[RMDB]
RNA sequence: GGGAACGACUCGAGUAGAGUCGAAAACUAAUGGAGAAUUCGGAGUAAAGACCCGAAGCUACAUUACCGAGAAUACGCUAAUGAAACUUCCCGGCGCUAUGCGCAUGAAGUAUCAGGAGUUCCGUGAUGAGAAGACUCUUCACGUUCUCAACGGUACCCCUCAGGCUAAAUUCGUUUAGCCUGAGGGAAAAGAAACAACAACAACAAC
Reactivity to 2A3 in 0.01 (KOAc 150mM, MgCl2 10mM, bicine 150mM(pH8.5), 24C), signal-to-noise 2, nucleotides 027 to 156: c000u020a000a050u000g030g020a040g080a170a300u050u000c010g010g010a120g010u110a100a200a080g090a080c000c000c000g000a000a020g000c040u020a030c000a010u010u010a080c020c110g060a090g100a170a020u180a120c100g070c140u090a110a020u110g050a090a110a090c000u020u000c020c020c010g050g000c000g010c050u140a130u300g010c000g000c020a040u130g000a090a020g060u070a050u140c020a010g110g000a010g020u040u000c070c020g000u040g010a020u010g010a000g040a190a150g120a200c000u000c000u030u020c010a010c000g000u030u000c000u000c000a060a130c040g030g010u030a010c010